The data come from the RNA Mapping Database (RMDB), library M2PK50. The record gives the reactivity of an RNA of 177 nucleotides to DMS and 2A3. For 2A3 the reverse transcriptase was SuperScript II with manganese. The 2A3 profile rests on 1,276 reads. The RNA was probed in 150 mM KOAc, 10 mM MgCl2 and 150 mM bicine (pH 8.5) at 24 C.
RNA sequence: GGGAACGACUCGAGUAGAGUCGAAAAGAAGCUGUCUUCGGACAGCUUCGGUUUAUUUCCUGUAAUCGUCGAGUCGUUCCCAUGAUUACAUGAAAUAAUUUGCUGUCUGCGGAUUCGUCCGCAGAAACAAGGGUGUUACUUUCGAGUAACACCCUUGAAAAGAAACAACAACAACAAC
Reactivity to DMS in 0.01 (KOAc 150mM, MgCl2 10mM, bicine 150mM(pH8.5), 24C), signal-to-noise 2, nucleotides 027 to 126: g010a010a000g000c000u000g010u000c000u010u020c150g030g010a000c000a010g010c000u010u000c000g000g010u010u010u010a080u000u000u000c010c050u000g010u000a100a070u000c090g000u000c060g000a040g000u010c000g000u000u010c010c000c010a000u000g000a060u000u000a040c070a050u000g010a050a070a090u000a060a040u010u000u000g010c120u010g000u010c000u010g000c000g010g000a040u000u000c160g020u000c000c000g010c000a000g000a020a040a160
Reactivity to 2A3 in 0.01 (KOAc 150mM, MgCl2 10mM, bicine 150mM(pH8.5), 24C), signal-to-noise 1, nucleotides 027 to 126: g000a000a000g010c000u010g010u040c020u040u120c270g030g000a000c000a000g000c000u000u000c000g000g010u000u020u030a040u000u030u060c010c010u020g110u060a030a090u070c090g090u000c000g070a010g000u030c000g000u000u010c010c000c000a000u000g000a000u040u010a000c010a030u150g050a020a040a040u130a050a100u080u100u200g110c040u030g050u060c000u000g040c030g000g010a020u000u020c090g000u000c010c000g020c010a010g000a000a000a020